Overview:
An RNA of 207 nucleotides, treated with 2A3 and read out base by base. The reactions ran in a buffer of 150 mM KOAc, 10 mM MgCl2 and 150 mM bicine (pH 8.5), at 24 C. 2A3 adducts were read by reverse transcription with SuperScript II with manganese. Values are in units of 0.01, from 0 to 300, in steps of 10. Source: RMDB library OK3TST, as collected in RNAgym.
RNA sequence: GGGAACGACUCGAGUAGAGUCGAAAACAUUGGGAACGUGGAUUUCUCCGCCACCGAGGAUGAGCUCAAGGACUUCUUCCAAGGUUUGCAGGUGGAGUCUGUGGAGAUCCCCACAAAGACGUUCACCAGGGGCAAGAAAACCGUCACAAGACGCCUACGUGUACGUUGGGUUCGCCCAACGUACACGAAAAGAAACAACAACAACAAC
Reactivity to 2A3 in 0.01 (KOAc 150mM, MgCl2 10mM, bicine 150mM(pH8.5), 24C), signal-to-noise 1, nucleotides 027 to 156: c020a030u020u050g010g010g030a010a030c010g040u020g120g000a250u060u000u080c020u030c010c000g000c010c010a100c030c000g020a070g000g010a000u060g000a050g000c000u060c290a210a140g130g040a210c060u100u040c000u020u010c100c070a070a010g000g020u000u130u300g160c180a030g000g000u020g000g000a000g000u000c020u000g010u000g020g000a100g000a130u030c000c030c020c000a000c000a000a140a010g060a010c010g050u020u000c000a040c100c000a020g070g000g000g030c060a080a000g020a130a100a000a000c100c020g010u020c110a050c000a300a090g030a050c020g060c040c060u140a120